[RMDB]
RNA sequence: GGGAACGACUCGAGUAGAGUCGAAAAAGAAAAGUUAUAGUUAGAUUCAAGCAGGAGGAAGUAUACAAAUGUUUGAACCCUCUUUUACUAAAAUCCUGAUACUUCGGGUGUGUGGAUGUGCAAAUCCAUCCUAUAUCGCUUUCGAGCGAUAUAGGAUAAAAGAAACAACAACAACAAC
Reactivity to DMS in 0.01 (KOAc 150mM, MgCl2 10mM, bicine 150mM(pH8.5), 24C), signal-to-noise 4, nucleotides 027 to 126: a090g010a070a040a060a070g000u020u010a080u020a110g000u000u020a090g000a160u000u020c030a010a010g010c030a010g000g010a300g000g000a060a060g020u000a020u010a060c050a040a250a070u010g000u000u000u000g000a020a050c070c020c050u000c040u000u000u020u000a110c120u020a070a050a040a080u020c000c000u010g000a030u020a030c060u000u000c060g000g020g000u010g000u010g020u000g010g010a010u000g010u010g010c150a040a060a040u010c060c050
Reactivity to 2A3 in 0.01 (KOAc 150mM, MgCl2 10mM, bicine 150mM(pH8.5), 24C), signal-to-noise 4, nucleotides 027 to 126: a000g090a010a040a020a010g060u110u070a100u090a110g070u090u070a060g030a250u060u020c010a020a000g010c010a010g010g020a010g020g040a130a000g120u060a030u040a160c040a010a030a010u040g040u010u020u040g040a050a060c010c040c000u020c030u030u090u010u060a150c090u130a060a050a040a090u030c000c000u030g030a030u030a120c030u030u010c020g000g010g000u040g000u000g040u030g060g010a030u020g030u060g080c030a040a010a030u000c000c000